[RMDB]
RNA sequence: GGGAACGACUCGAGUAGAGUCGAAAAAGACAGACAGUGCACACUGCAGACUGUGCUCACUGCGAUUGACCAGUGAGGAAUGUGGUCAAUUGCACAUUCCACAGUCAAGUCACCAGUGUGCAGUGUUGUCGCAUGAACACUGCACUGUCAAGCGACACGUAACUAGCUAGUUCGCUAGCUAGUUACGAAAAGAAACAACAACAACAAC
Reactivity to DMS in 0.01 (KOAc 150mM, MgCl2 10mM, bicine 150mM(pH8.5), 24C), signal-to-noise 3, nucleotides 027 to 156: a110g010a140c070a100g030a070c070a020g020u010g030c040a070c020a070c030u000g020c020a200g020a040c010u000g030u000g020c120u000c050a080c080u010g020c020g060a200u000u010g010a050c030c020a060g000u010g010a180g000g000a040a040u010g040u000g010g000u000c030a080a090u000u010g000c010a030c010a100u000u010c070c070a030c000a080g000u040c020a080a200g020u000c060a070c120c000a040g040u000g010u000g010c000a030g000u000g010u000u010g030u000c040g040c060a160u000g010a150a050c050a090c040u000g000c040a110c050u000g010u010c040a120a050g010c050g000a120c030a130
Reactivity to 2A3 in 0.01 (KOAc 150mM, MgCl2 10mM, bicine 150mM(pH8.5), 24C), signal-to-noise 7, nucleotides 027 to 156: a000g060a020c070a000g050a010c000a030g160u000g010c010a010c000a000c000u020g000c040a040g010a010c000u010g000u020g020c020u020c030a060c020u010g010c010g040a030u020u020g000a010c010c000a030g080u080g170a120g090g200a100a090u280g040u040g130g010u030c000a020a030u010u040g010c000a000c010a030u090u000c010c000a000c010a000g000u020c060a090a040g110u110c040a030c110c000a020g010u010g010u000g000c000a010g000u000g000u000u040g010u010c010g000c020a040u070g030a050a000c050a010c070u170g000c090a050c090u030g020u030c020a040a040g020c020g020a000c020a000